Notes
Chemical mapping of a 177-nucleotide RNA with DMS and 2A3. The data come from the RNA Mapping Database (RMDB), library OK2TRN. For DMS the reverse transcriptase was MarathonRT. Conditions: 150 mM KOAc, 10 mM MgCl2 and 150 mM bicine (pH 8.5), 24 C. For 2A3 the reverse transcriptase was SuperScript II with manganese.
[RMDB]
RNA sequence: GGGAACGACUCGAGUAGAGUCGAAAAUUUGAAGGGUCAGACAUUGACCCUGCUGAGGAAGCCACCGUGAGCAUCUCCGGGUCAUAUAUUGUUACUGGCCGUCAACUGCAGCCUUUAUACCAAGCGCUGACGAUACUGUUUUCGAACAGUAUCGUCAAAAAGAAACAACAACAACAAC
Reactivity to DMS in 0.01 (KOAc 150mM, MgCl2 10mM, bicine 150mM(pH8.5), 24C), signal-to-noise 3, nucleotides 027 to 126: u010u010u000g010a050a040g000g010g010u000c000a020g030a160c140a130u010u000g010a020c000c000c000u000g020c070u030g000a090g020g020a150a100g010c000c040a090c210c200g010u000g020a110g010c040a110u000c020u000c050c080g000g010g010u010c010a040u000a100u000a080u000u000g020u000u010a100c090u000g000g000c000c000g010u010c040a030a070c240u000g010c040a040g000c000c020u010u000u000a100u010a110c070c090a080a100g010c120g010c120
Reactivity to 2A3 in 0.01 (KOAc 150mM, MgCl2 10mM, bicine 150mM(pH8.5), 24C), signal-to-noise 1, nucleotides 027 to 126: u110u070u050g050a030a060g160g000g020u010c000a020g020a160c090a070u000u100g000a000c000c000c000u000g010c020u060g000a050g020g040a080a080g000c000c010a120c070c100g190u120g040a030g000c030a060u030c020u000c040c020g010g030g000u000c050a000u130a010u040a050u130u170g090u060u050a150c050u020g010g000c030c000g020u020c040a030a040c030u090g020c010a030g030c010c010u110u110u050a220u060a030c050c050a080a030g020c100g000c120